Structure probing data (DMS and 2A3) for a 177-nucleotide construct. The DMS profile rests on 11,037 reads.
[RMDB]
RNA sequence: GGGAACGACUCGAGUAGAGUCGAAAAAUUCAGGCGCAGCAAGUCGGCAUCGCCACCGUUAUCCUGAUAAAAACCAUUCAGGCUGGUUUGUUUACGGAAGGGGGCCGACUGGCGAAUUAAAUCCAGAUAAUUUAAUGAUGUUCGCAUCAUUAAAUUAAAAAGAAACAACAACAACAAC
Reactivity to DMS in 0.01 (KOAc 150mM, MgCl2 10mM, bicine 150mM(pH8.5), 24C), signal-to-noise 7, nucleotides 027 to 126: a070u000u000c050a110g020g010c080g020c120a140g010c070a060a030g010u000c000g000g000c000a050u000c030g000c010c010a130c010c010g000u000u010a060u010c040c050u000g010a060u010a040a070a040a070a060c080c040a080u000u000c090a040g000g030c290u000g010g010u010u010u000g010u000u000u000a030c030g000g020a110a090g000g000g000g000g000c000c000g010a010c020u000g000g010c010g010a050a070u010u010a060a090a120u000c020c020a100g000a300
Reactivity to 2A3 in 0.01 (KOAc 150mM, MgCl2 10mM, bicine 150mM(pH8.5), 24C), signal-to-noise 3, nucleotides 027 to 126: a000u090u050c020a030g130g010c030g020c070a110g030c020a100a000g000u000c000g030g000c000a080u090c020g180c090c000a030c000c010g000u010u040a030u070c010c020u040g040a020u150a040a210a020a020a020c010c010a020u090u100c030a080g110g000c080u060g020g080u090u220u120g080u060u180u050a010c010g000g020a050a080g160g000g000g010g000c000c000g010a000c010u000g000g000c020g010a000a020u130u080a040a030a010u010c010c000a010g020a130